[RMDB]
RNA sequence: GGGAACGACUCGAGUAGAGUCGAAAAUCGUGAAGAUUGUCAAUUCCGACCUAACUGUCUCUCAUUGCUACACCAAUGUCCUCAGUCUCAAUGUUCAAGGUGAAGAGUACGGAGUGAUAGGGCACGAUCGCCUACUGACAUUCGUGUCAGUAGGCGAAAAAGAAACAACAACAACAAC
Reactivity to 2A3 in 0.01 (KOAc 150mM, MgCl2 10mM, bicine 150mM(pH8.5), 24C), signal-to-noise 2, nucleotides 027 to 126: u020c000g000u080g090a070a100g050a180u100u110g030u040c020a030a150u100u000c030c000g030a040c030c020u030a080a100c030u020g050u060c020u000c010u000c090a020u000u130g010c010u030a020c040a040c040c020a100a110u160g060u080c000c020u070c000a080g110u050c030u050c060a070a120u110g070u060u040c060a100a040g050g010u060g050a110a070g060a020g070u030a070c040g000g010a010g010u030g000a010u030a060g010g020g040c020a010c060g030a040
Reactivity to DMS in 0.01 (KOAc 150mM, MgCl2 10mM, bicine 150mM(pH8.5), 24C), signal-to-noise 3, nucleotides 027 to 126: u000c020g030u010g000a110a080g000a090u010u020g010u010c150a120a140u000u000c040c000g020a080c050c050u010a060a130c050u010g010u000c040u000c040u000c010a080u000u000g020c090u000a050c080a090c130c060a070a170u010g000u000c020c050u000c140a090g000u020c050u000c050a080a040u000g000u000u000c050a050a160g000g010u000g010a070a080g000a100g020u020a060c090g010g010a010g000u000g010a040u000a090g010g000g000c020a050c040g030a090